[RMDB]
RNA sequence: GGGAACGACUCGAGUAGAGUCGAAAACGCCUCUAAGUCAGAAUCCAUGCUGGAAUAGACGAUAAUCACCUUUCCCGAUGUGCCGCGAAUAGCGAUAGGUGUCUUCUGGACACCCAACAUCAUACAACCAUAUGGACAAAUUCGUUUGUCCAUAUGGAAAAGAAACAACAACAACAAC
Reactivity to DMS in 0.01 (KOAc 150mM, MgCl2 10mM, bicine 150mM(pH8.5), 24C), signal-to-noise 8, nucleotides 027 to 126: c160g000c050c040u000c070u000a040a110g010u000c030a040g010a160a080u020c080c160a060u000g020c060u000g000g000a080a050u010a050g010a050c040g010a080u010a080a110u020c110a050c040c030u010u000u000c010c010c000g010a050u000g010u010g010c130c020g000c010g010a070a070u020a090g000c020g020a190u010a110g010g010u000g000u000c000u000u030c240u030g000g000a000c010a010c000c000c120a060a030c050a020u010c040a120u020a090c210a080a190
Reactivity to 2A3 in 0.01 (KOAc 150mM, MgCl2 10mM, bicine 150mM(pH8.5), 24C), signal-to-noise 9, nucleotides 027 to 126: c050g060c030c010u000c030u060a080a070g040u030c020a020g040a080a060u020c030c010a060u170g070c040u080g030g050a060a060u050a090g030a020c020g030a030u110a070a060u080c030a060c030c000u010u030u010c000c010c000g010a030u030g020u040g070c040c020g010c010g060a130a130u120a180g020c020g030a050u090a070g000g000u000g000u000c010u140u080c130u210g080g000a000c000a000c000c000c000a010a050c000a030u070c010a030u060a190c050a060a050